[RMDB]
Annotation:
Structure probing data (2A3 and DMS) for a 177-nucleotide construct. DMS adducts were read by reverse transcription with MarathonRT. The data come from the RNA Mapping Database (RMDB), libraries RFM100 and RFMREP. The reactions ran in a buffer of 150 mM KOAc, 10 mM MgCl2 and 150 mM bicine (pH 8.5), at 24 C. For 2A3 the reverse transcriptase was SuperScript II with manganese.

RNA sequence: GGGAACGACUCGAGUAGAGUCGAAAAUACCCUGAAUAAGGGAGUGAAAUAGUACCUGAAACCUAGCGCUUACAAGCGGUCGGAGCCUACGGGUGACGGCGUGCCUUUUGCAUAAUGAGCCUACGAGUCUAACGGAAUUAUUCGUAAUUCCGUUAGAAAAAGAAACAACAACAACAAC
Reactivity to 2A3 in 0.01 (KOAc 150mM, MgCl2 10mM, bicine 150mM(pH8.5), 24C), signal-to-noise 9, nucleotides 027 to 126: u110a030c000c000c010u020g070a100a060u180a110a040g010g020g020a030g040u100g080a040a060a050u140a050g040u050a060c020c020u040g050a090a040a040c020c010u020a030g020c010g000c110u060u090a060c040a120a040g020c010g030g010u020c010g010g000a010g000c010c010u070a120c200g070g000g000u020g020a010c010g000g020c010g050u050g020c010c010u050u130u090u120g020c010a020u050a150a070u180g030a020g010c000c000u020a040c060g060a040g110
Reactivity to DMS in 0.01 (KOAc 150mM, MgCl2 10mM, bicine 150mM(pH8.5), 24C), signal-to-noise 9, nucleotides 027 to 126: u040a080c010c010c000u010g000a140a070u040a140a050g000g000g010a140g020u010g010a110a090a120u020a070g010u010a100c010c010u000g000a090a110a130c070c040u000a030g010c110g020c020u010u020a080c180a110a090g000c030g010g010u000c030g010g000a300g000c020c010u000a080c130g020g000g020u010g000a280c040g010g010c020g010u010g010c050c040u000u010u020u010g010c130a070u010a070a070u010g000a060g010c010c010u000a050c150g000a130g020